RNA sequence: GGGAACGACUCGAGUAGAGUCGAAAAACUUUGAUGGCGGUACUAUGAAUUGAUGCAAGGUGUGGAGCGACCUUAAACAGUUCUGGUGGUACUCUGAAUGGAGUGCUCUACUGAGAUUAUAAAAUAGCAUGCAUAGAGUGCUUCGGCACUCUAUGAACCUUACUCGAACCUUCGGGUUCGAGUAAGGAAAAGAAACAACAACAACAAC
Reactivity to 2A3 in 0.01 (KOAc 150mM, MgCl2 10mM, bicine 150mM(pH8.5), 24C), signal-to-noise 2, nucleotides 027 to 156: a000c030u100u070u110g070a050u030g000g020c000g000g010u020a030c030u070a060u100g040a050a060u040u020g070a060u100g070c030a030a010g020g000u050g020u060g020g000a020g010c030g020a000c000c010u060u110a110a070a020c010a020g010u010u030c020u020g060g000u050g010g030u010a000c020u000c020u030g120a140a100u200g030g030a020g030u020g000c020u010c040u100a050c040u030g040a030g000a130u060u120a090u240a110a100a060a070u150a030g080c090a040u080g000c010a000u010a010g000a000g000u000g000c000u020u020c040g040g010c000a000c000u000c000u000a000u000g000a000a000
The record gives the reactivity of an RNA of 207 nucleotides to 2A3. 2A3 adducts were read by reverse transcription with SuperScript II with manganese. The RNA was probed in 150 mM KOAc, 10 mM MgCl2 and 150 mM bicine (pH 8.5) at 24 C. The 2A3 profile rests on 1,365 reads. Reactivities are given for positions 27 through 156.